[RMDB]
RNA sequence: GGGAACGACUCGAGUAGAGUCGAAAAGCCAGAUCAAAAAGGAGGAAUACCGCAGGCCUGCGGUGCGGCAGUGUGGAGACCUGCCGUAAGCCGUGUUGUUUUGACAACCGGGAGAAAGCGUAUGCGGCGGACAUAACCCUUUCGAGGGUUAUGUCCGAAAAGAAACAACAACAACAAC
Reactivity to 2A3 in 0.01 (KOAc 150mM, MgCl2 10mM, bicine 150mM(pH8.5), 24C), signal-to-noise 3, nucleotides 027 to 126: g060c020c010a080g060a100u140c120a040a090a080a000a000g120g040a050g030g060a040a080u010a170c000c000g050c010a030g020g120c020c030u050g000c000g010g020u020g000c000g000g030c000a000g000u020g030u100g140g040a070g020a030c000c010u010g000c000c000g000u010a010a010g050c000c000g050u070g000u040u000g000u000u080u090u190g040a020c010a010a020c010c000g000g010g000a100g100a050a040a030g030c020g010u050a060u110g010c010g000g000
Reactivity to DMS in 0.01 (KOAc 150mM, MgCl2 10mM, bicine 150mM(pH8.5), 24C), signal-to-noise 2, nucleotides 027 to 126: g000c010c000a050g000a080u040c160a060a050a020a200a080g010g010a150g020g010a090a080u050a190c000c010g020c010a060g000g030c000c040u020g000c040g000g010u000g000c010g000g010c030a030g000u030g000u020g050g010a130g000a100c230c010u000g000c000c000g000u000a040a100g020c000c010g030u000g000u000u000g000u010u020u030u020g010a060c030a050a030c000c000g000g020g000a090g000a030a050a040g000c080g030u020a080u030g030c000g000g040